[RMDB]
Chemical mapping of a 177-nucleotide RNA with 2A3 and DMS. For 2A3, 5,941 sequencing reads were counted. The RNA was probed in 150 mM KOAc, 10 mM MgCl2 and 150 mM bicine (pH 8.5) at 24 C. Values are in units of 0.01, from 0 to 300, in steps of 10.
RNA sequence: GGGAACGACUCGAGUAGAGUCGAAAAGCGGAUGCGCUUGAGGUCCUCCUUGCCGGAAGCGCCGACGAAGGAAAGCGCCACGGGACCGAGCGACAUAUCGAACAGCCGGCGACCCUCGGGCGAGGCGCCUGCAUAGUGCUUUCGAGCACUAUGCAGGAAAAGAAACAACAACAACAAC
Reactivity to 2A3 in 0.01 (KOAc 150mM, MgCl2 10mM, bicine 150mM(pH8.5), 24C), signal-to-noise 7, nucleotides 027 to 126: g070c050g030g020a060u110g050c030g010c000u020u050g100a070g100g020u020c020c000u040c020c020u090u140g080c030c030g030g050a050a060g030c020g020c030c020g030a050c070g090a080a070g120g060a100a070a010g040c050g000c020c030a050c070g020g000g020a020c030c020g020a030g000c030g060a090c030a030u210a080u170c040g040a080a050c010a030g020c000c020g050g010c020g090a200c010c010c010u050c060g050g000g010c020g000a020g020g020c040g020
Reactivity to DMS in 0.01 (KOAc 150mM, MgCl2 10mM, bicine 150mM(pH8.5), 24C), signal-to-noise 5, nucleotides 027 to 126: g000c020g010g010a060u030g000c040g010c000u000u000g000a090g000g000u000c010c010u000c030c050u000u020g010c060c050g000g000a140a170g010c020g030c000c020g000a300c020g000a180a110g010g010a030a130a210g010c040g000c010c040a160c140g000g000g010a060c000c010g000a040g010c010g000a110c070a060u010a100u010c080g020a100a120c080a140g020c050c030g000g000c020g010a130c060c010c010u000c080g030g000g010c020g000a140g000g010c180g000